About this RNA:
An RNA of 207 nucleotides, treated with 2A3 and read out base by base. The reactions ran in a buffer of 150 mM KOAc, 10 mM MgCl2 and 150 mM bicine (pH 8.5), at 24 C. The 2A3 profile rests on 772 reads. For 2A3 the reverse transcriptase was SuperScript II with manganese.
[RMDB]
RNA sequence: GGGAACGACUCGAGUAGAGUCGAAAAUGUGAGUGGUACUAUACAAAUUGUUGCUAGUGUGCCUGAUAUGUUUUUGCCUGCUUUUGACGUGUUUGUCAAAGCUGUGCAAACUGUUUUUGACUGUGCUGUUGAGACCAGUACUAUUGCAGGUAAAUCAAUCCUCGCUGCAUUUCGAUGCAGCGAGGAUAAAAGAAACAACAACAACAAC
Reactivity to 2A3 in 0.01 (KOAc 150mM, MgCl2 10mM, bicine 150mM(pH8.5), 24C), signal-to-noise 2, nucleotides 027 to 156: u130g020u010g030a020g000u070g080g010u120a140c050u090a060u040a110c060a100a130a040u040u060g070u000u040g040c040u050a080g070u000g010u040g080c010c010u010g030a070u060a070u100g160u040u120u000u030u030g000c020c010u000g000c040u010u040u040u090g030a010c030g010u080g090u290u160u300g000u010c000a020a000a000g000c040u030g020u040g010c030a010a010a010c010u050g110u080u040u040u060u120g020a060c060u050g000u000g040c020u020g040u090u030g030a080g030a060c010c020a000g000u000a040c040u090a060u010u070g020c030a000g050g010u050a110a000a060u120c030a030